[RMDB]
RNA sequence: GGGAACGACUCGAGUAGAGUCGAAAAAAGUGCUAUGGGGAGUCUGUGUUAGUUAAUGCUGCUAACACACAUCUUAAGCAUGGCGGUGGUAUCGCUGGUGCUAUUAAUGCGGCUUCAAAAGGGGCUGAACGUAGAACCUUCGGGUUCUACAAAAGAAACAACAACAACAAC
Reactivity to 2A3 in 0.01 (KOAc 150mM, MgCl2 10mM, bicine 150mM(pH8.5), 24C), signal-to-noise 9, nucleotides 027 to 129: a010a010g100u090g010c020u020a050u110g030g000g000g000a020g020u000c040u070g010u020g000u000u000a000g000u040u150a140a080u300g170c220u060g000c000u030a000a000c000a000c000a000c010a040u020c020u090u060a050a000g010c020a010u060g010g000c000g010g020u140g080g110u130a050u130c020g000c050u090g080g030u030g000c020u020a040u120u190a080a080u140g030c010g010g000c000u010u020c030a090a090a070a060g030g010g010g000c010u010g030a040a000c060
Reactivity to DMS in 0.01 (KOAc 150mM, MgCl2 10mM, bicine 150mM(pH8.5), 24C), signal-to-noise 5, nucleotides 027 to 129: a050a040g030u000g020c040u000a040u060g000g000g000g000a080g040u000c110u040g030u020g020u000u000a020g020u000u040a020a080u070g000c230u000g020c030u030a020a010c030a020c010a080c100a010u020c050u030u040a030a020g000c030a010u010g020g000c040g020g050u000g050g060u050a090u000c090g000c060u040g010g080u000g020c010u020a090u060u030a060a080u040g020c080g000g020c030u010u000c030a060a040a100a150g030g000g000g040c040u040g020a000a020c150
Chemical mapping of a 170-nucleotide RNA with 2A3 and DMS. The RNA was probed in 150 mM KOAc, 10 mM MgCl2 and 150 mM bicine (pH 8.5) at 24 C. It was measured as part of the RMDB library 15KLIB. For 2A3, 19,865 sequencing reads were counted. For 2A3 the reverse transcriptase was SuperScript II with manganese. The DMS profile rests on 26,849 reads.